[RMDB]
RNA sequence: GGGAACGACUCGAGUAGAGUCGAAAAAUCGCCCACGCUAAGGAAACGAUCUAUUUCGUUUGUAAACCUUAUUAAGCCGACCGCCUAGUAGCGCGGCUAUUGCCAGACCGUGGACGAUACCAGCGUCGUGUAUACACAAGUUCGCUUGUGUAUACACAAAAGAAACAACAACAACAAC
Reactivity to 2A3 in 0.01 (KOAc 150mM, MgCl2 10mM, bicine 150mM(pH8.5), 24C), signal-to-noise 7, nucleotides 027 to 126: a000u010c010g000c000c000c010a010c020g010c040u060a000a020g020g000a020a010a000c000g020a010u030c070u180a230u130u130u020c020g020u030u030u040g120u140a140a130a090c010c000u050u040a060u110u120a130a020g000c010c010g100a230c070c060g030c010c030u060a130g070u190a030g060c010g000c010g010g010c000u010a020u020u070g030c000c010a030g040a060c020c010g020u000g010g000a000c000g000a010u030a070c010c010a030g050c010g180u140c070
Reactivity to DMS in 0.01 (KOAc 150mM, MgCl2 10mM, bicine 150mM(pH8.5), 24C), signal-to-noise 6, nucleotides 027 to 126: a030u000c020g030c000c000c000a040c000g020c120u000a090a060g010g000a050a020a000c010g000a000u000c300u040a170u010u010u000c000g000u000u020u000g010u010a080a120a300c070c030u000u000a060u010u010a090a070g010c000c030g000a080c150c030g020c000c030u020a120g020u000a110g020c030g010c010g010g000c010u010a010u000u000g000c100c120a100g000a100c300c000g020u000g000g010a010c000g000a030u010a240c020c010a120g000c250g020u010c180

Overview: Source: RMDB library RFMREP, as collected in RNAgym. An RNA of 177 nucleotides, treated with 2A3 and DMS and read out base by base. The RNA was probed in 150 mM KOAc, 10 mM MgCl2 and 150 mM bicine (pH 8.5) at 24 C. For 2A3 the reverse transcriptase was SuperScript II with manganese.